The record gives the reactivity of an RNA of 207 nucleotides to 2A3. Conditions: 150 mM KOAc, 10 mM MgCl2 and 150 mM bicine (pH 8.5), 24 C. The data come from the RNA Mapping Database (RMDB), library M2RFPK. For 2A3 the reverse transcriptase was SuperScript II with manganese.
RNA sequence: GGGAACGACUCGAGUAGAGUCGAAAAACGAGUCGUACGCGACUCGAAUGGUAUUGUCGGCGUAAAAGAACAAGACGUCACCGGACGCGACCGGGCUAAAAAGCGAAACGUCCUCUACGGAUGACGAAAAACGGACCUGGGUUCGCCCAGGUCCGAAGCUUUUAGUUCAGUUCGCUGAACUAAAAGCAAAAGAAACAACAACAACAAC
Reactivity to 2A3 in 0.01 (KOAc 150mM, MgCl2 10mM, bicine 150mM(pH8.5), 24C), signal-to-noise 1, nucleotides 027 to 156: a000c000g000a010g020u030c010g010u040a000c200g000c010g110a000c000u000c000g010a010a030u080g050g100u140a130u110u220g090u080c050g020g000c000g010u060a080a050a200a000g090a170a060c060a100a020g100a020c000g010u010c000a010c020c000g000g000a010c000g010c020g000a010c000c030g000g000g000c010u030a040a040a000a000a000g020c010g010a120a030a000c020g010u020c050c010u020c010u010a020c150g150g000a030u010g000a020c030g050a030a020a050a020a000c010g010g000a000c000c000u000g000g060g000u120u110c110g020c000c020c000a000g000g000u000c000c000g010a000a010

Values are in units of 0.01, from 0 to 300, in steps of 10. The 2A3 profile rests on 885 reads.